[RMDB]
RNA sequence: GGGAACGACUCGAGUAGAGUCGAAAAUGUCGACGGCGUGGUGGCGGUGUCGGCCGACGAGGUCGAGAUCCGAAAUGCGCUGAACACAGCGGUGAUCGGCGGGGUGGACCUGGUGGUGUCGGUCGGCGCCGCAGCAUAGAUUCGUCUAUGCUGCGGCAAAAGAAACAACAACAACAAC
Reactivity to 2A3 in 0.01 (KOAc 150mM, MgCl2 10mM, bicine 150mM(pH8.5), 24C), signal-to-noise 4, nucleotides 027 to 126: u090g020u030c020g020a120c020g040g030c070g000u070g010g050u040g030g070c020g000g010u040g010u020c000g000g000c000c000g010a020c030g040a010g030g000u020c020g010a040g030a120u010c020c020g030a040a050a060u250g030c020g000c000u010g020a120a010c210a010c010a090g130c090g180g030u060g040a070u030c000g000g000c020g030g090g010g020u120g080g000a030c000c020u080g070g080u150g040g080u260g060u020c000g000g000u010c000g010g000c010
Reactivity to DMS in 0.01 (KOAc 150mM, MgCl2 10mM, bicine 150mM(pH8.5), 24C), signal-to-noise 5, nucleotides 027 to 126: u010g010u000c060g010a120c060g010g010c050g030u000g010g030u010g020g000c040g010g000u000g030u010c010g020g000c000c000g000a030c030g000a160g010g020u000c010g000a130g010a070u010c000c000g010a060a100a110u010g010c020g000c000u000g000a090a120c200a080c030a130g020c090g010g010u000g010a220u000c010g020g020c080g010g000g000g010u010g010g000a030c000c010u000g010g030u010g010g020u010g010u000c010g000g020u000c020g000g000c040
An RNA of 177 nucleotides, treated with 2A3 and DMS and read out base by base.
DMS adducts were read by reverse transcription with MarathonRT.
The RNA was probed in 150 mM KOAc, 10 mM MgCl2 and 150 mM bicine (pH 8.5) at 24 C.
The 2A3 profile rests on 5,434 reads.
For 2A3 the reverse transcriptase was SuperScript II with manganese.
It was measured as part of the RMDB library OK2TRN.